An RNA of 177 nucleotides, treated with DMS and read out base by base. High DMS reactivity at an A or C suggests that its Watson-Crick edge is free. The reactions ran in a buffer of 150 mM KOAc, 10 mM MgCl2 and 150 mM bicine (pH 8.5), at 24 C.

RNA sequence: GGGAACGACUCGAGUAGAGUCGAAAACCCAGCGGCUCGACAGGAGUAAUCCCCGCCGAAACAGGGUUUUCACCCUUCCUUUCUUCGGGUGUCCUUCCUCGCGCCCGCAGGACCACCCCUCGCCCCCCCUUAGUAAUUCCUUCGGGAAUUACUAAGGAAAAGAAACAACAACAACAAC
Reactivity to DMS in 0.01 (KOAc 150mM, MgCl2 10mM, bicine 150mM(pH8.5), 24C), signal-to-noise 1, nucleotides 027 to 126: c030c000c010a100g020c040g020g000c030u010c020g000a050c200a050g010g000a080g000u020a080a060u010c090c010c020c010g000c100c060g000a010a020a020c130a050g010g010g020u010u000u010u010c150a080c000c000c010u000u010c040c020u000u000u000c010u010u000c020g030g010g000u000g000u010c030c020u000u010c040c040u000c050g010c110g010c070c010c020g040c050a060g000g000a080c070c030a170c030c010c010c000u000c000g000c020c000c020c020c040